Record summary
Source: RMDB library OK1LIB, as collected in RNAgym. This 177-nucleotide RNA was probed chemically with DMS and 2A3. In probing experiments dimethyl sulfate is read out at A N1 and C N3, which are open when not base-paired. Reactivities are given for positions 27 through 126. The reactions ran in a buffer of 150 mM KOAc, 10 mM MgCl2 and 150 mM bicine (pH 8.5), at 24 C. DMS adducts were read by reverse transcription with MarathonRT. The 2A3 profile rests on 1,705 reads.
RNA sequence: GGGAACGACUCGAGUAGAGUCGAAAACUGAGAAGAAAGUGCUUAGCACCAAACCUAAGACAACCUCUGUUACGAAGUUAAUCAGGGAUGUCCUUGAGAUUUCGAAGGGCAGUGGGAUUAAAAUUGAGAUUAAGCACUCGUUCGCGAGUGCUUAAUCAAAAGAAACAACAACAACAAC
Reactivity to DMS in 0.01 (KOAc 150mM, MgCl2 10mM, bicine 150mM(pH8.5), 24C), signal-to-noise 2, nucleotides 027 to 126: c070u010g040a050g050a110a100g000a190a130a140g010u020g000c000u030u000a120g020c110a110c040c110a030a110a120c170c000u000a030a040g020a060c120a090a210c010c060u000c000u000g020u000u030a090c020g000a070a050g000u000u000a020a090u000c030a010g000g020g020a280u020g030u060c010c010u000u000g000a030g000a030u000u000u000c000g000a210a060g010g020g060c010a010g000u020g000g000g000a210u000u020a020a000a150a060u040u000g010a230
Reactivity to 2A3 in 0.01 (KOAc 150mM, MgCl2 10mM, bicine 150mM(pH8.5), 24C), signal-to-noise 4, nucleotides 027 to 126: c060u090g080a020g060a260a050g050a070a160a000g080u120g100c030u110u050a020g010c040a010c120c040a080a060a060c000c000u060a090a000g050a070c030a000a140c000c000u000c020u030g040u020u010a090c040g020a040a010g010u040u010a170a060u030c010a000g030g000g100a160u190g170u190c020c000u010u030g010a040g020a030u010u040u020c030g030a140a050g060g000g000c000a000g000u080g030g020g090a030u140u300a070a080a030a130u090u200g080a100